[RMDB]
RNA sequence: GGGAACGACUCGAGUAGAGUCGAAAAGUAUCCAUGUUCGCAUGGAUACGAAAUAUGCGCGCGUAUAUCCGGUUGGCUGGAUGCGCGCGACUGGCUGGCCGGUGGUGCUAGUCUUCGGACUAGCAAACUGUUUACUGAUGUUCGCAUCAGUAAACAGAAAAGAAACAACAACAACAAC
Reactivity to DMS in 0.01 (KOAc 150mM, MgCl2 10mM, bicine 150mM(pH8.5), 24C), signal-to-noise 4, nucleotides 027 to 126: g000u010a000u000c000c000a000u000g010u000u020c200g030c010a010u000g000g010a000u000a000c000g000a060a090a080u010a060u000g010c010g000c000g010c010g010u000a060u010a120u000c000c000g010g010u010u010g010g010c030u000g010g000a050u000g000c000g000c000g010c000g000a030c100u000g010g000c020u000g000g010c020c030g000g010u000g010g020u000g010c000u000a000g010u000c000u000u010c190g010g010a020c010u000a000g010c010a050a060a160
Reactivity to 2A3 in 0.01 (KOAc 150mM, MgCl2 10mM, bicine 150mM(pH8.5), 24C), signal-to-noise 4, nucleotides 027 to 126: g010u000a000u000c000c000a000u000g040u030u060c240g000c110a000u000g010g020a010u000a010c000g010a010a010a000u230a060u100g010c010g000c000g000c000g060u030a110u010a060u290c010c000g030g050u150u170g180g080c030u050g090g020a050u040g010c000g000c000g000c000g000a030c030u020g030g000c000u020g040g000c020c000g010g050u080g030g060u070g000c010u000a000g010u000c000u010u030c140g060g000a000c000u000a000g000c000a020a020a010
An RNA of 177 nucleotides, treated with DMS and 2A3 and read out base by base. Conditions: 150 mM KOAc, 10 mM MgCl2 and 150 mM bicine (pH 8.5), 24 C.